[RMDB]
RNA sequence: GGGAACGACUCGAGUAGAGUCGAAAACGAGACGAUUCGCCUAAGACGGUCAGGAUGAGCGAAUACCUGAACAGGUUAAAUUCAAGCUUCGAGUUUCCGAAGCCUAUUAUUGUAGACGACAAUAAGGUCAGAAAGACGGAUUCGUCCGUCUUUCUGAAAAAGAAACAACAACAACAAC
Reactivity to DMS in 0.01 (KOAc 150mM, MgCl2 10mM, bicine 150mM(pH8.5), 24C), signal-to-noise 4, nucleotides 027 to 126: c050g010a090g000a100c080g020a130u000u010c030g020c010c020u000a100a100g000a060c070g020g010u010c050a070g000g010a080u000g020a110g020c100g000a100a080u000a040c000c010u000g020a090a090c110a050g000g010u000u000a020a080a050u000u000c110a100a140g010c030u000u010c010g000a150g000u010u010u000c070c000g000a020a080g010c010c050u010a050u000u010a010u010u000g000u010a100g020a080c200g010a200c030a010a040u000a020a040g000g010
Reactivity to 2A3 in 0.01 (KOAc 150mM, MgCl2 10mM, bicine 150mM(pH8.5), 24C), signal-to-noise 3, nucleotides 027 to 126: c020g010a010g060a020c050g070a130u070u050c010g080c040c000u040a110a020g050a060c060g040g010u030c030a000g020g050a050u100g050a040g100c050g060a110a050u060a180c010c010u030g050a080a050c050a110g050g030u040u050a050a090a110u170u090c070a080a020g000c000u020u020c020g080a110g080u020u120u000c030c000g020a020a000g000c010c010u090a120u150u010a010u010u050g020u020a100g030a250c070g030a000c060a000a010u040a080a030g090g000
The record gives the reactivity of an RNA of 177 nucleotides to DMS and 2A3. Reactivities are given for positions 27 through 126. The DMS profile rests on 3,060 reads. For 2A3, 2,023 sequencing reads were counted. It was measured as part of the RMDB library OK2TRN. The reactions ran in a buffer of 150 mM KOAc, 10 mM MgCl2 and 150 mM bicine (pH 8.5), at 24 C.